[RMDB]
RNA sequence: GGGAACGACUCGAGUAGAGUCGAAAAGAUGGGGAUUGAUUCGUCUCCUCGGAGGGAACGGCUGACAUAUUGCAGGAACACAGCAACCUAAUUUCCGAACAAAAUCAGGUUGCUGGGGGCGAAGCAACCAGUACAUAUUGUUCGCAAUAUGUACUGGAAAAGAAACAACAACAACAAC
Reactivity to 2A3 in 0.01 (KOAc 150mM, MgCl2 10mM, bicine 150mM(pH8.5), 24C), signal-to-noise 9, nucleotides 027 to 126: g100a040u150g000g000g010g020a020u050u120g100a120u180u140c070g030u010c020u000c020c010u020c030g050g020a050g020g010g010a060a060c030g040g000c040u050g050a060c040a080u220a080u060u190g010c020a020g020g050a110a010c050a000c000a030g000c000a000a000c000c000u010a020a040u010u020u010c080c100g110a090a030c060a050a040a010a020u030c020a000g000g000u000u000g000c000u010g000g000g000g010g010c050g030a040a010g010c010a010a050
Reactivity to DMS in 0.01 (KOAc 150mM, MgCl2 10mM, bicine 150mM(pH8.5), 24C), signal-to-noise 9, nucleotides 027 to 126: g010a090u020g010g010g000g000a070u010u010g010a150u010u010c100g010u000c020u000c020c010u010c080g010g010a110g010g010g000a080a080c100g000g010c040u010g010a100c140a090u010a100u010u010g010c040a060g000g000a100a080c100a160c020a010g000c000a010a010c000c000u000a030a010u000u000u000c050c060g010a090a140c300a120a010a000a010u000c030a010g000g010u000u000g010c000u000g000g000g000g010g010c060g000a100a080g010c080a060a140
This 177-nucleotide RNA was probed chemically with 2A3 and DMS. Values cover nucleotides 27 to 126.